[RMDB]
RNA sequence: GGGAACGACUCGAGUAGAGUCGAAAAGCAACUUAGGAUUUUAGGCUCCCCGUGCGUGUCUCGAACCAUGCCGGGCCAAACCCACGGGGGCUGGCGGUCCCCGUGCGGUCAAAAUCAAACCGCCGGAAAAACAGUUCUAGCUUCGGCUAGAACUGAAGGUAUGUGCAAGGUUCGCCUUGCACAUACCAAAAGAAACAACAACAACAAC
Reactivity to 2A3 in 0.01 (KOAc 150mM, MgCl2 10mM, bicine 150mM(pH8.5), 24C), signal-to-noise 1, nucleotides 027 to 156: g070c060a050a060c110u170u180a120g120g060a230u300u200u040u090a060g000g000c070u100c060c020c010c010g110u160g040c040g010u050g030u010c110u070c300g020a060a040c050c000a000u000g020c000c000g010g000g000c010c030a030a010a030c000c000c000a000c000g000g000g000g000g000c000u000g000g000c000g000g000u000c010c010c000c000g000u000g000c070g010g030u010c010a010a040a040a130u090c030a090a100a090c000c000g100c000c000g030g000a050a120a010a000a000c010a000g000u000u000c000u000a000g000c000u020u030c200g050g010c000u010a000g000a000a000c000u000g000a000a000